[RMDB]
About this RNA:
Chemical mapping of a 207-nucleotide RNA with 2A3. For 2A3 the reverse transcriptase was SuperScript II with manganese. As a SHAPE reagent, 2A3 marks flexible, mostly unpaired nucleotides at the ribose 2'-OH. Source: RMDB library M2RFPK, as collected in RNAgym. Values are in units of 0.01, from 0 to 300, in steps of 10.
RNA sequence: GGGAACGACUCGAGUAGAGUCGAAAAAGCUGCUCAGUAUACGUACUGAGCAGCAAGGGGUUGAAGCGGACACCCCUUCAGGCGCGCGCCCAAGCUCCGUACGCCGCCUCAUACGUGAGCCGGCGAAAUAGGUGUAUCUGGUUCGCCAGAUACACAACCACGUAUGAGUGUUCGCACUCAUACGUGGAAAAGAAACAACAACAACAAC
Reactivity to 2A3 in 0.01 (KOAc 150mM, MgCl2 10mM, bicine 150mM(pH8.5), 24C), signal-to-noise 1, nucleotides 027 to 156: a000g000c000u000g010c000u000c000a010g000u000a050u010a050c260g010u000a000c010u000g010a000g020c010a000g000c000a010a010g000g010g000g000u000u140g160a170a000g030c010g000g000a000c000a020c000c010c000c000u040u130c050a000g000g000c060g010c040g000c030g000c100c010c020a010a020g020c140u000c000c010g000u010a040c010g000c000c000g050c010c030u000c010a040u040a100c240g130u020g000a010g000c030c000g000g000c010g030a000a040a030u210a010g030g020u010g000u000a000u030c010u000g020g000u030u020c050g000c050c000a000g000a000u010a000c000a000c000a000a010